[RMDB]
Description: An RNA of 177 nucleotides, treated with DMS and 2A3 and read out base by base. DMS adducts were read by reverse transcription with MarathonRT. For 2A3 the reverse transcriptase was SuperScript II with manganese. Reactivities are given for positions 27 through 126. Conditions: 150 mM KOAc, 10 mM MgCl2 and 150 mM bicine (pH 8.5), 24 C.
RNA sequence: GGGAACGACUCGAGUAGAGUCGAAAACCUACUGCCUUCGGGCAGUAGGAAACAGGUGCUUCUACAACCUGAAUAACUAGAUGAAACAUCUAGUGAAGAAGAAAAGGAACCGCUUCGGCGGUUCCAACCUAUAAGACCAGUUCGCUGGUCUUAUAGGAAAAGAAACAACAACAACAAC
Reactivity to DMS in 0.01 (KOAc 150mM, MgCl2 10mM, bicine 150mM(pH8.5), 24C), signal-to-noise 4, nucleotides 027 to 126: c000c000u010a000c000u000g010c020c010u000u010c260g030g010g030c010a010g010u000a000g000g000a040a050a100c020a010g020g020u000g010c170u000u000c010u000a090c040a300a050c000c000u010g000a180a080u020a120a030c000u000a000g000a010u000g010a190a110a150c100a030u000c000u000a010g000u000g020a110a120g010a090a110g000a080a080a130a130g010g010a020a010c010c000g030c000u000u000c230g020g020c000g020g000u000u000c000c000a010a010
Reactivity to 2A3 in 0.01 (KOAc 150mM, MgCl2 10mM, bicine 150mM(pH8.5), 24C), signal-to-noise 1, nucleotides 027 to 126: c000c000u000a000c020u000g000c020c000u020u040c140g020g010g010c000a000g000u010a000g000g010a040a040a000c040a010g000g040u030g030c110u070u030c000u050a060c020a110a030c010c000u000g020a000a050u090a080a000c000u000a020g010a040u040g120a260a260a020c040a070u020c010u010a000g010u010g010a050a030g010a040a000g070a020a130a030a040g020g000a020a020c000c000g090c050u070u100c300g130g000c000g000g000u010u010c000c000a000a000